[RMDB]
RNA sequence: GGGAACGACUCGAGUAGAGUCGAAAAGUUGAAGUGUUCGCACUUCAACAAACGCUCAACUCAUGGAGCGCAUGACGAAUAGCUACAUAUUCGACAUGAGAAAAAGACUGUAGUUCGCUACAGUCAACCACUAGUAUUGCUUCGGCAAUACUAGUGGAAAAGAAACAACAACAACAAC
Reactivity to DMS in 0.01 (KOAc 150mM, MgCl2 10mM, bicine 150mM(pH8.5), 24C), signal-to-noise 2, nucleotides 027 to 126: g000u000u000g000a030a000g020u000g000u000u000c240g030c000a010c010u000u000c000a000a000c000a050a110a120c010g000c000u000c010a060a120c050u030c020a030u010g000g000a010g020c000g010c080a030u010g000a030c000g000a010a020u010a010g000c180u000a130c200a140u000a010u010u000c000g000a090c000a000u010g000a050g020a060a040a070a160a100g010a020c010u010g020u010a020g010u000u010c190g020c000u020a000c000a010g000u000c010a050a060
Reactivity to 2A3 in 0.01 (KOAc 150mM, MgCl2 10mM, bicine 150mM(pH8.5), 24C), signal-to-noise 4, nucleotides 027 to 126: g010u000u000g010a020a000g000u000g000u080u140c210g040c050a000c000u000u010c000a010a010c000a000a010a010c000g000c000u000c000a030a100c030u010c040a030u030g030g000a000g010c030g000c150a140u220g060a030c000g010a000a010u020a020g070c130u220a080c080a180u050a030u000u020c000g010a010c000a000u010g000a010g010a050a050a010a000a000g010a000c000u000g000u000a000g020u030u070c260g020c080u010a010c000a000g000u000c000a000a020

The record gives the reactivity of an RNA of 177 nucleotides to DMS and 2A3. High DMS reactivity at an A or C suggests that its Watson-Crick edge is free. The RNA was probed in 150 mM KOAc, 10 mM MgCl2 and 150 mM bicine (pH 8.5) at 24 C.